[RMDB]
RNA sequence: GGGAACGACUCGAGUAGAGUCGAAAAUUAUUGAUAUUGAUCAAUCACCGAUAGGUAGAACGCCACGCUCUAAUCCAGCAACAUAUACUGGUGUGUUUGAUGAUAUACGUGAUGUGUUUGCGCAAACCAUCCAAACGACUUUCGAGUCGUUUGGAUGAAAAGAAACAACAACAACAAC
Reactivity to 2A3 in 0.01 (KOAc 150mM, MgCl2 10mM, bicine 150mM(pH8.5), 24C), signal-to-noise 3, nucleotides 027 to 126: u130u070a010u060u040g080a030u000a100u110u210g120a020u050c020a010a010u030c000a040c050c010g100a150u050a150g000g060u020a040g040a090a010c020g000c080c000a030c040g000c000u000c040u100a000a110u100c010c000a020g110c010a030a040c030a090u110a010u050a070c050u060g020g000u040g000u020g010u040u060u080g120a190u050g060a030u010a000u010a140c030g070u030g020a030u080g030u010g030u050u070u070g170c090g000c010a000a040a050c070
Reactivity to DMS in 0.01 (KOAc 150mM, MgCl2 10mM, bicine 150mM(pH8.5), 24C), signal-to-noise 2, nucleotides 027 to 126: u020u010a020u000u040g010a030u020a080u000u000g010a030u010c010a020a010u010c020a030c020c030g020a120u020a100g000g020u020a040g000a120a070c080g020c000c020a030c070g020c000u000c030u000a060a050u000c070c230a020g010c070a130a080c160a110u000a230u000a130c050u030g000g000u030g010u000g000u000u000u000g020a020u050g020a050u040a000u020a020c080g000u000g000a100u020g000u030g010u000u000u030g000c030g020c120a050a070a090c230
The record gives the reactivity of an RNA of 177 nucleotides to 2A3 and DMS. It was measured as part of the RMDB library OK1LIB. 2A3 adducts were read by reverse transcription with SuperScript II with manganese. High 2A3 reactivity points to a flexible backbone, as in loops and unpaired stretches. For 2A3, 1,129 sequencing reads were counted.